[RMDB]
RNA sequence: GGGAACGACUCGAGUAGAGUCGAAAACGAGGAAGUACCAGCUGGCGUGUCAGCAAGAAGGGGUGGUGUUGCCAUGUCCUUCAACAAAGGCAACGAGGAAGUACCAGCUGGCGUGUCAGCAAGAAGGACUACUCCGGAGUUUCGACUCCGGAGUAGUAAAAGAAACAACAACAACAAC
Reactivity to 2A3 in 0.01 (KOAc 150mM, MgCl2 10mM, bicine 150mM(pH8.5), 24C), signal-to-noise 3, nucleotides 027 to 126: c060g000a090g170g060a170a000g030u110a080c000c030a030g020c010u000g020g030c000g000u000g000u000c010a010g080c100a060a030g140a090a090g050g060g040g000u120g020g050u100g040u090u080g000c000c000a000u050g070u150c010c000u120u120c010a040a040c060a020a070a040g010g000c020a000a000c020g020a170g090g090a050a050g060u220a050c000c000a020g000c000u020g000g000c000g000u030g000u000c010a000g000c000a000a020g010a040a010g070g000
Reactivity to DMS in 0.01 (KOAc 150mM, MgCl2 10mM, bicine 150mM(pH8.5), 24C), signal-to-noise 1, nucleotides 027 to 126: c120g000a120g040g040a110a120g000u030a150c200c060a110g020c030u000g000g000c000g090u030g070u010c030a000g000c040a090a170g000a000a140g010g000g000g070u000g090g000u020g040u010u000g040c020c000a150u000g030u040c020c040u000u000c270a030a130c110a110a030a040g000g000c040a080a000c020g000a030g000g000a060a020g000u000a060c000c060a000g020c010u000g050g020c010g000u000g000u000c010a060g000c000a010a120g000a130a050g000g000

Record summary
This 177-nucleotide RNA was probed chemically with 2A3 and DMS. For DMS, 1,383 sequencing reads were counted. The 2A3 profile rests on 1,558 reads. DMS adducts were read by reverse transcription with MarathonRT. The reactions ran in a buffer of 150 mM KOAc, 10 mM MgCl2 and 150 mM bicine (pH 8.5), at 24 C. Reactivities are rounded to 0.1 and cut off at 0 and 3. DMS (dimethyl sulfate) methylates the pairing face of unpaired adenines and cytosines.